[RMDB]
RNA sequence: GGGAACGACUCGAGUAGAGUCGAAAAGCGUACAUGGCGCAGGCGCGCAGCUAUGCGGACAACGUGCUCGCGCCGCUCGCGCAGGCGCCGAAUCCGCAGGACGGCGGCUUCGUCAACGUGCGGCUGACCCGCCCUAAUCAUUCGUGAUUAGGGCGGGAAAAGAAACAACAACAACAAC
Reactivity to 2A3 in 0.01 (KOAc 150mM, MgCl2 10mM, bicine 150mM(pH8.5), 24C), signal-to-noise 1, nucleotides 027 to 126: g040c000g020u070a010c040a170u130g020g000c010g000c010a000g010g050c010g000c010g000c030a030g000c000u040a020u130g020c000g010g040a020c020a250a130c170g140u160g020c030u000c000g060c010g030c010c010g000c010u010c000g000c000g010c010a000g020g000c000g000c000c080g010a000a010u020c020c000g030c020a030g080g100a030c060g030g000c000g040g040c070u200u150c060g000u010c030a060a060c070g040u010g010c020g030g080c060u080g110a130
Reactivity to DMS in 0.01 (KOAc 150mM, MgCl2 10mM, bicine 150mM(pH8.5), 24C), signal-to-noise 2, nucleotides 027 to 126: g020c090g010u020a020c210a170u000g010g020c000g010c000a020g010g020c000g010c010g000c290a010g040c000u000a110u000g000c010g020g010a020c000a160a160c300g020u010g000c020u010c020g030c000g020c270c250g000c020u020c050g020c020g020c000a020g000g010c010g020c000c020g000a040a020u000c040c000g040c000a060g000g010a140c210g000g020c060g000g030c070u020u000c000g000u010c120a130a150c120g000u010g010c020g040g030c060u000g020a240